[RMDB]
RNA sequence: GGGAACGACUCGAGUAGAGUCGAAAAGAUAUGGAUCACUCCCCACCUCGGGAAGCGAGGAUCUCGGAAACGAGGGAGCUUCACUCGAGAGGUGAUCCUAAGUCAAACUCGUGGUUCGCCACGAGAACGACAAUCCAUACUUCGGUAUGGAUUGUCGAAAAGAAACAACAACAACAAC
Reactivity to 2A3 in 0.01 (KOAc 150mM, MgCl2 10mM, bicine 150mM(pH8.5), 24C), signal-to-noise 2, nucleotides 027 to 126: g020a060u220a060u240g000g010a000u020c000a000c010u130c000c000c000c040a050c000c010u000c020g000g000g000a030a000g010c020g030a230g080g010a020u040c010u010c020g000g030a060a040a060c020g000a010g000g000g000a010g020c010u050u030c070a160c110u110c000g010a000g000a020g030g000u000g000a010u000c000c000u030a140a040g160u120c160a170a090a110c020u010c000g000u020g030g020u080u120c300g070c120c000a010c000g000a000g000a010a010
Reactivity to DMS in 0.01 (KOAc 150mM, MgCl2 10mM, bicine 150mM(pH8.5), 24C), signal-to-noise 2, nucleotides 027 to 126: g000a070u000a080u010g010g010a010u000c010a020c030u020c150c040c000c090a300c100c000u000c000g000g000g000a050a020g010c000g010a060g010g010a030u000c000u010c010g000g000a120a110a140c020g010a020g000g000g000a040g010c000u010u000c050a030c100u000c000g000a010g000a110g050g000u000g000a010u000c000c000u020a050a080g000u030c040a150a080a110c010u000c000g030u000g010g010u000u020c240g020c020c000a000c000g000a010g000a080a050
An RNA of 177 nucleotides, treated with 2A3 and DMS and read out base by base. For DMS the reverse transcriptase was MarathonRT. It was measured as part of the RMDB library TTRDEL.